[RMDB]
RNA sequence: GGGAACGACUCGAGUAGAGUCGAAAAGGUUACCACUCACGUCCGGUAUCACAAGCUGACCUCUUAAUGACGGAAUCAGUCAUGGACUGUCUGCGUGAGAAUUCACAAGCCAGCGCAUCGACUGCAGACCCAUUUCUGAUUUCGAUCAGAAAUGGGUAAAAGAAACAACAACAACAAC
Reactivity to 2A3 in 0.01 (KOAc 150mM, MgCl2 10mM, bicine 150mM(pH8.5), 24C), signal-to-noise 9, nucleotides 027 to 126: g070g000u070u050a050c020c010a040c030u050c010a050c030g050u030c020c010g000g040u070a110u170c040a020c040a160a040g010c030u040g040a050c020c010u070c020u140u290a210a080u290g030a040c110g030g050a060a160u090c000a010g040u030c020a070u040g020g030a050c030u050g020u030c050u070g030c040g030u020g010a020g070a070a150u160u100c040a040c010a100a060g000c050c020a040g010c050g010c060a070u050c090g100a080c020u050g000c030a030g050
Reactivity to DMS in 0.01 (KOAc 150mM, MgCl2 10mM, bicine 150mM(pH8.5), 24C), signal-to-noise 4, nucleotides 027 to 126: g000g030u010u000a080c030c030a150c050u010c050a040c060g010u010c070c050g000g020u010a040u020c080a030c090a130a140g020c020u010g010a070c040c030u000c070u030u030a120a050u010g000a020c120g000g000a140a080u020c070a000g010u000c040a080u000g020g010a090c070u000g000u010c030u010g000c070g010u000g000a070g000a050a070u040u020c050a050c040a120a100g010c040c010a030g020c110g000c080a070u000c070g010a080c060u010g010c120a110g000